[RMDB]
RNA sequence: GGGAACGACUCGAGUAGAGUCGAAAAGAUAUGGAUCUCCAAGCACAUCGAUCUGUAGGUCGGAAACGACCUGACAGGGAGUGUGGAGAUCCUAAGUCAAAGGGCUUUCGGUUCGCCGAAAGCCCAACCUUACACGUCAGUUCGCUGACGUGUAAGGAAAAGAAACAACAACAACAAC
Reactivity to DMS in 0.01 (KOAc 150mM, MgCl2 10mM, bicine 150mM(pH8.5), 24C), signal-to-noise 2, nucleotides 027 to 126: g020a010u000a020u020g000g010a000u000c010u000c000c000a050a230g020c020a030c000a300u000c240g010a040u000c010u000g010u000a000g000g010u000c000g020g010a030a000a050c000g020a010c000c010u000g000a020c000a020g000g010g000a040g020u000g060u010g000g000a010g000a020u000c000c000u000a000a070g010u000c010a090a130a160g020g000g010c000u000u000u010c000g010g000u010u030c240g030c020c000g020a010a010a010g000c000c000c010a000a030
Reactivity to 2A3 in 0.01 (KOAc 150mM, MgCl2 10mM, bicine 150mM(pH8.5), 24C), signal-to-noise 3, nucleotides 027 to 126: g000a000u000a000u010g000g000a000u000c000u000c000c010a140a160g300c000a010c010a060u300c140g040a010u000c010u020g000u000a000g010g020u010c000g000g000a000a010a000c000g000a010c000c020u010g060a000c010a010g030g030g040a080g010u030g070u260g010g000a010g000a010u000c010c000u000a000a000g000u000c030a070a100a130g000g000g020c000u000u020u010c010g020g100u060u120c300g100c130c000g000a000a000a000g000c000c000c000a010a000